This 177-nucleotide RNA was probed chemically with 2A3 and DMS. For 2A3 the reverse transcriptase was SuperScript II with manganese. For DMS, 24,535 sequencing reads were counted.
RNA sequence: GGGAACGACUCGAGUAGAGUCGAAAAGAAGUCGUCGGAAGCGGCAGGACUAAGAGGGCCACUUGCGGCUUUAAGAAAGUCGGAAACUGCAAAACUGUGUAUGUCAAAACAUUGCAUGAGAGCGGUAUCCAAUUAUCUAUUUCGAUAGAUAAUUGGAAAAAGAAACAACAACAACAAC
Reactivity to 2A3 in 0.01 (KOAc 150mM, MgCl2 10mM, bicine 150mM(pH8.5), 24C), signal-to-noise 9, nucleotides 027 to 126: g090a040a000g030u050c040g010u040c060g060g070a090a020g030c030g030g010c040a030g050g060a030c040u070a070a030g060a060g050g050g020c020c010a040c010u030u070g030c010g010g020c010u000u020u020a080a050g080a070a050a010g040u040c020g000g040a110a130a040c020u020g000c020a050a030a080a110c030u020g000u000g010u060a030u040g050u070c070a000a040a070a060c020a070u040u160g010c020a020u080g040a020g000a010g060c010g000g030u020a060
Reactivity to DMS in 0.01 (KOAc 150mM, MgCl2 10mM, bicine 150mM(pH8.5), 24C), signal-to-noise 8, nucleotides 027 to 126: g000a090a070g020u010c020g020u010c070g000g010a070a070g010c040g020g010c050a090g000g000a090c060u020a110a120g000a120g000g010g010c020c030a080c080u010u010g000c040g000g000c000u000u000u010a060a090g010a120a080a040g010u010c010g000g010a050a090a080c030u010g000c000a030a060a130a110c080u010g010u000g000u020a010u010g010u010c210a090a070a100a110c050a030u010u030g010c020a020u020g000a070g010a150g010c010g010g020u000a150